Structure probing data (2A3 and DMS) for a 177-nucleotide construct. The data come from the RNA Mapping Database (RMDB), library TTRDEL. DMS adducts were read by reverse transcription with MarathonRT.
RNA sequence: GGGAACGACUCGAGUAGAGUCGAAAAGAUAUGGACACCAUUAUUUGCGCAUGGAUCCCUCGGAAACGAGAACUCCAUGAACUACGCAUUCAUGGUGUCCUAAGUCAAACGGCAGUUCGCUGCCGAACUCUCCAAGACAGUUCGCUGUCUUGGAGAGAAAAGAAACAACAACAACAAC
Reactivity to 2A3 in 0.01 (KOAc 150mM, MgCl2 10mM, bicine 150mM(pH8.5), 24C), signal-to-noise 1, nucleotides 027 to 126: g050a030u040a030u200g010g000a000c000a020c020c020a010u050u050a110u070u130u160g010c030g030c040a020u030g010g000a020u070c010c000c000u000c040g000g030a070a040a030c020g000a010g040a090a000c010u000c010c000a000u000g000a000a010c040u150a040c040g000c010a020u040u000c000a000u030g010g010u010g000u000c000c010u000a010a010g020u000c000a050a030a110c030g010g000c010a000g020u040u150c180g080c130u000g010c010c000g030a020a010
Reactivity to DMS in 0.01 (KOAc 150mM, MgCl2 10mM, bicine 150mM(pH8.5), 24C), signal-to-noise 1, nucleotides 027 to 126: g010a080u010a300u030g000g000a000c000a000c000c000a000u000u000a060u010u000u000g010c000g030c000a000u000g000g020a040u000c040c010c010u040c020g000g010a150a050a130c010g020a030g000a180a030c000u000c000c010a010u010g000a070a090c160u000a300c010g000c030a030u000u000c290a040u000g000g000u000g000u100c000c000u000a010a100g010u000c030a040a110a220c050g010g000c000a000g020u010u030c280g000c000u000g000c000c000g000a060a060